[RMDB]
RNA sequence: GGGAACGACUCGAGUAGAGUCGAAAAUAUUGUGGAGAAGGCGAAAGCCUGUUGGCAGAACUUUGUGACUACUGGCGCGAGUAUCCCUCCACCCAGGCGGAUGCUUUAAUGUUGCAAUGGUGCCGUCCCACUGAAACAAGUUCGCUUGUUUCAGUGGAAAAGAAACAACAACAACAAC
Reactivity to 2A3 in 0.01 (KOAc 150mM, MgCl2 10mM, bicine 150mM(pH8.5), 24C), signal-to-noise 2, nucleotides 027 to 126: u140a030u070u130g010u070g000g070a090g030a190a020g030g010c020g020a130a020a000g000c020c000u000g010u050u030g020g000c040a010g050a240a100c030u100u090u050g000u020g050a040c000u080a030c070u080g130g000c050g000c010g030a000g000u040a030u020c020c000c000u000c010c000a080c000c000c000a000g030g010c040g020g020a020u050g030c000u030u100u080a190a090u150g060u070u020g000c030a040a040u050g120g060u040g090c020c010g000u030c000
Reactivity to DMS in 0.01 (KOAc 150mM, MgCl2 10mM, bicine 150mM(pH8.5), 24C), signal-to-noise 5, nucleotides 027 to 126: u010a060u010u010g010u010g000g010a140g020a170a030g000g000c010g010a150a100a180g010c010c000u000g000u010u010g010g030c030a070g000a110a060c050u000u000u000g020u000g000a040c030u010a100c110u010g000g000c070g010c120g000a020g000u000a050u010c020c010c010u010c040c020a110c040c030c040a180g000g010c300g000g000a050u000g010c010u000u000u000a080a110u010g000u010u000g000c020a020a040u000g000g000u000g000c010c020g020u000c060
The record gives the reactivity of an RNA of 177 nucleotides to 2A3 and DMS. DMS adducts were read by reverse transcription with MarathonRT. The RNA was probed in 150 mM KOAc, 10 mM MgCl2 and 150 mM bicine (pH 8.5) at 24 C. For 2A3, 1,476 sequencing reads were counted.